An RNA of 207 nucleotides, treated with DMS and 2A3 and read out base by base. In probing experiments dimethyl sulfate is read out at A N1 and C N3, which are open when not base-paired. The DMS profile rests on 7,832 reads. The data come from the RNA Mapping Database (RMDB), library OK3TST.

RNA sequence: GGGAACGACUCGAGUAGAGUCGAAAAAGGGAGAAGCUGGUGAGGCCAAGUGCCAGUUUUUGAAGAACAUCUCUGUGACCCUGGCAAGCUGGAGCCAGAGGCCUGGGCUCCUGUCUGCCUGGGGGCCAUCCAGAAGGACUGAGCUUGCUUUUUCAGCAAGCUAGAAGUAAUUCGUUACUUCUAGCUUAAAAGAAACAACAACAACAAC
Reactivity to DMS in 0.01 (KOAc 150mM, MgCl2 10mM, bicine 150mM(pH8.5), 24C), signal-to-noise 3, nucleotides 027 to 156: a070g010g000g010a090g020a080a120g020c030u020g010g020u000g010a090g000g030c020c030a070a110g010u010g010c020c010a050g010u000u000u010u000u050g000a170a140g010a080a110c050a100u010c050u000c010u020g030u000g000a100c010c020c010u010g000g000c000a030a060g010c000u010g020g010a120g030c000c010a050g000a130g000g020c070c020u010g010g010g000c000u010c010c000u000g010u000c020u000g040c070c010u000g020g000g010g000g020c060c020a070u000c030c030a080g010a110a150g010g000a110c050u020g010a140g000c060u000u000g010c010u000u000u000u000u000c020a090g010c220
Reactivity to 2A3 in 0.01 (KOAc 150mM, MgCl2 10mM, bicine 150mM(pH8.5), 24C), signal-to-noise 4, nucleotides 027 to 156: a000g070g020g010a100g020a070a040g010c040u060g020g000u040g040a040g040g000c030c030a070a020g090u090g090c050c040a040g030u030u040u030u100u140g100a100a060g030a050a040c040a070u030c030u000c030u090g080u080g110a120c010c010c020u010g010g010c040a060a020g000c010u030g010g000a010g010c010c010a040g060a100g070g070c030c040u070g040g040g000c000u010c000c010u010g030u020c020u020g000c010c010u030g010g000g000g000g060c050c020a040u040c030c010a030g030a050a040g040g010a020c050u050g020a010g010c000u020u020g010c000u040u100u060u070u090c050a040g010c040